[RMDB]
Chemical mapping of a 170-nucleotide RNA with DMS and 2A3.
RNA sequence: GGGAACGACUCGAGUAGAGUCGAAAAGGGAUUACCCUAAGUGUGAUAGAGCUAUGCCUAAUAUGUGUAGAAUCUUCGCUUCACUCAUAUUAGCUCGUAAACAUGGCACUUGUUGUACUACAAGGGAAAACGUCAACGUUCGCGUUGACGAAAAGAAACAACAACAACAAC
Reactivity to DMS in 0.01 (KOAc 150mM, MgCl2 10mM, bicine 150mM(pH8.5), 24C), signal-to-noise 7, nucleotides 027 to 129: g000g060g000a110u040u060a120c020c000c020u030a090a060g030u010g000u000g000a020u000a030g030a080g030c000u010a050u020g000c170c030u010a000a000u050a020u030g000u000g020u020a000g000a010a030u000c110u050u070c220g000c230u010u030c000a060c010u020c010a000u000a030u010u010a020g010c090u050c150g020u060a060a100a250c050a010u010g000g000c030a080c000u020u030g050u000u040g020u030a040c040u000a060c080a100a050g020g010g030a090a040a030a110
Reactivity to 2A3 in 0.01 (KOAc 150mM, MgCl2 10mM, bicine 150mM(pH8.5), 24C), signal-to-noise 4, nucleotides 027 to 129: g130g040g040a100u110u220a200c010c000c000u030a070a040g030u020g010u020g040a060u060a080g060a000g020c020u030a020u060g010c000c000u010a010a010u000a000u000g030u000g010u030a140g020a010a010u070c080u170u200c180g030c080u010u010c010a000c010u010c000a000u010a000u000u000a000g010c060u040c110g030u070a040a040a020c010a030u030g010g000c000a000c020u020u070g010u030u020g020u030a020c020u040a030c080a050a030g030g000g000a010a070a030a040

The DMS profile rests on 28,840 reads.